[RMDB]
RNA sequence: GGGAACGACUCGAGUAGAGUCGAAAAAAGUGAUUAUUCGUAAUCACUUCACCCCGGGCGCGGUGGCGCGUGCCUGUAGUCCCAGCUACUCGGGAGGCUAAACGACGUACCCGUUCGCGGGUACGAAAGUUUACUAUAUUUUCGAAUAUAGUAAACUAAAAGAAACAACAACAACAAC
Reactivity to 2A3 in 0.01 (KOAc 150mM, MgCl2 10mM, bicine 150mM(pH8.5), 24C), signal-to-noise 2, nucleotides 027 to 126: a000a000g010u000g020a020u010u030a010u040u070c150g020u030a020a000u000c000a010c000u010u030c060a190c000c000c000c000g000g020g000c010g000c000g010g010u030g000g030c010g000c010g020u000g020c000c000u040g000u070a020g030u000c020c000c010a020g010c020u210a180c020u120c120g020g030g010a030g020g020c060u130a150a080a030c060g140a020c010g000u000a010c000c030c010g000u010u020c210g020c050g070g000g000u000a000c000g010a000a000
Reactivity to DMS in 0.01 (KOAc 150mM, MgCl2 10mM, bicine 150mM(pH8.5), 24C), signal-to-noise 3, nucleotides 027 to 126: a020a010g010u000g000a010u000u000a020u000u010c170g020u000a010a000u000c000a000c000u000u000c090a200c040c020c000c020g000g000g010c020g030c030g010g000u000g010g000c030g000c030g020u000g010c000c000u000g000u010a040g010u000c000c000c010a080g020c020u000a120c060u010c120g020g010g000a050g010g010c140u000a030a060a100c140g010a210c020g030u000a000c000c000c000g010u000u010c220g010c010g000g000g010u000a000c000g000a030a050

Description
Chemical mapping of a 177-nucleotide RNA with 2A3 and DMS. For 2A3, 3,110 sequencing reads were counted. It was measured as part of the RMDB library M2PK50. Reactivities are given for positions 27 through 126. For 2A3 the reverse transcriptase was SuperScript II with manganese. The reactions ran in a buffer of 150 mM KOAc, 10 mM MgCl2 and 150 mM bicine (pH 8.5), at 24 C.